Structure probing data (DMS and 2A3) for a 177-nucleotide construct.
[RMDB]
RNA sequence: GGGAACGACUCGAGUAGAGUCGAAAAAUUGAACUUAAUCAGUGAUGCAUGAAUGUAUCUUCUGAAUAGUACAUAAAUAAACAUUUCAGGAAAUCAUUAACUAUGUCCAUUCAUGUAGCCAAUUAGCAGUACCCUGAUGAUUCGUCAUCAGGGUACUAAAAGAAACAACAACAACAAC
Reactivity to DMS in 0.01 (KOAc 150mM, MgCl2 10mM, bicine 150mM(pH8.5), 24C), signal-to-noise 2, nucleotides 027 to 126: a030u000u010g040a140a070c110u000u000a100a100u020c300a000g000u040g020a090u000g000c000a000u020g000a100a010u000g000u000a080u040c040u000u000c000u010g000a010a010u000a150g000u000a130c210a200u020a050a030a180u030a140a010a070c010a250u000u000u000c000a030g030g000a000a010a080u010c060a060u030u000a050a100c190u060a100u000g000u060c220c000a000u000u010c010a000u000g000u000a010g020c050c020a070a010u020u020a070g030c300
Reactivity to 2A3 in 0.01 (KOAc 150mM, MgCl2 10mM, bicine 150mM(pH8.5), 24C), signal-to-noise 5, nucleotides 027 to 126: a000u090u170g030a050a010c050u070u170a060a070u180c040a040g040u000g050a060u040g000c000a000u000g010a030a000u010g020u080a070u060c000u100u000c000u030g010a000a030u030a080g070u040a020c060a130u230a060a180a040u200a040a150a030c080a090u040u030u030c010a000g040g060a070a050a110u060c030a080u080u150a070a130c100u210a120u190g040u080c070c000a000u000u000c000a000u000g000u020a000g020c040c000a120a280u120u090a080g070c010
For DMS, 2,357 sequencing reads were counted.